This 207-nucleotide RNA was probed chemically with 2A3. For 2A3 the reverse transcriptase was SuperScript II with manganese. Source: RMDB library OK3TST, as collected in RNAgym.
[RMDB]
RNA sequence: GGGAACGACUCGAGUAGAGUCGAAAAUUGCGCCACGGAUUCUGUUUUCGCCUGGAUUGGUCGCCCUGCUCGACGAGCUGGACAGCUGGCCAGAACCGCAGACCGGGCACCACUACGACGGGCUUUGUGCCUUGUCAAUCCUCUGGAUGAUCGCCAGCCUAACACAGAAGUUCGCUUCUGUGUUAGGAAAAGAAACAACAACAACAAC
Reactivity to 2A3 in 0.01 (KOAc 150mM, MgCl2 10mM, bicine 150mM(pH8.5), 24C), signal-to-noise 3, nucleotides 027 to 156: u080u090g030c060g040c040c020a190c050g030g010a090u240u010c030u040g110u050u060u100u220c130g100c050c080u120g020g020a150u060u090g050g000u040c020g000c020c000c000u050g020c030u040c050g300a300c100g000a070g020c010u050g040g010a020c030a100g030c060u100g000g000c000c000a020g000a170a090c040c070g000c000a010g010a010c010c010g000g000g000c000a030c040c020a060c040u120a050c110g010a000c000g020g010g030c000u090u100u270g080u100g030c000c000u030u220g020u020c000a000a040u020c000c020u020c010u000g000g000a030u090g060a040u070c030g030c030c000a000g000

Conditions: 150 mM KOAc, 10 mM MgCl2 and 150 mM bicine (pH 8.5), 24 C. The 2A3 profile rests on 1,729 reads.